This 207-nucleotide RNA was probed chemically with 2A3.
As a SHAPE reagent, 2A3 marks flexible, mostly unpaired nucleotides at the ribose 2'-OH.
Conditions: 150 mM KOAc, 10 mM MgCl2 and 150 mM bicine (pH 8.5), 24 C.
The 2A3 profile rests on 391 reads.
[RMDB]
RNA sequence: GGGAACGACUCGAGUAGAGUCGAAAAUAAACAACGAAUAUGUGGGAAUGCCUAUCCGUUCAGAUGGGGUCAUGCAAUUAGCUGGAGGGGGUAGUCAUUCAUUAACUCCCCUAAAUGCUUAUCUACUUUUACAAUCUGCUUCUUCUAUGCCUCGCAACGCCUGUGUGGUAUUCGUACCACACAGGCGAAAAGAAACAACAACAACAAC
Reactivity to 2A3 in 0.01 (KOAc 150mM, MgCl2 10mM, bicine 150mM(pH8.5), 24C), signal-to-noise 1, nucleotides 027 to 156: u090a040a040a050c060a000a000c000g100a060a020u040a090u200g010u020g040g000g050a070a000u170g020c030c010u100a220u020c050c020g090u150u000c010a030g000a010u100g000g000g050g080u110c080a030u060g020c000a000a110u020u030a100g030c040u000g110g030a050g140g000g000g000g010u030a020g060u110c150a060u300u020c060a010u110u080a030a010c030u000c000c000c000c000u000a010a010a010u060g010c030u000u040a050u000c090u010a060c020u070u130u110u080a100c050a070a070u050c030u030g060c020u030u000c000u110u000c020u020a090u050g010c000c000u000c030g030c070a150a070